[RMDB]
Source information: Chemical mapping of a 177-nucleotide RNA with 2A3 and DMS. For 2A3 the reverse transcriptase was SuperScript II with manganese.
RNA sequence: GGGAACGACUCGAGUAGAGUCGAAAAUCAUUGGCUUCGCUGCGCGCUGCGUUGCCUUGGCUUCAGAUGCUUCGUACUGUUGCCAACGUUGCAAUUUCCAAACGCUAAUGCGAAAGUGUGCAAACAAUCGAGCUUUAACAUUCGUGUUAAAGCUCGAAAAAGAAACAACAACAACAAC
Reactivity to 2A3 in 0.01 (KOAc 150mM, MgCl2 10mM, bicine 150mM(pH8.5), 24C), signal-to-noise 2, nucleotides 027 to 126: u130c020a030u030u180g040g020c020u010u010c000g000c050u070g000c010g000c000g000c020u030g000c000g020u000u010g000c010c000u000u000g000g000c000u000u000c010a020g040a190u100g100c080u080u200c100g040u080a110c020u030g000u020u020g010c010c000a010a030c070g040u050u100g020c030a040a060u020u080u050c020c000a060a070a020c020g000c010u150a190a030u240g000c020g040a030a000a010g040u070g020u030g030c000a070a020a100c030a000a160
Reactivity to DMS in 0.01 (KOAc 150mM, MgCl2 10mM, bicine 150mM(pH8.5), 24C), signal-to-noise 2, nucleotides 027 to 126: u010c070a140u020u000g010g000c060u010u000c030g000c030u010g010c150g010c030g010c040u000g000c060g010u020u010g000c000c000u000u000g000g000c010u000u000c020a010g020a100u010g000c170u000u000c120g030u000a110c030u000g010u000u000g000c010c000a010a070c250g000u000u010g020c040a020a050u000u000u000c040c050a040a140a140c000g010c020u010a150a070u000g000c000g010a010a000a050g010u000g030u000g040c090a140a060a080c200a040a120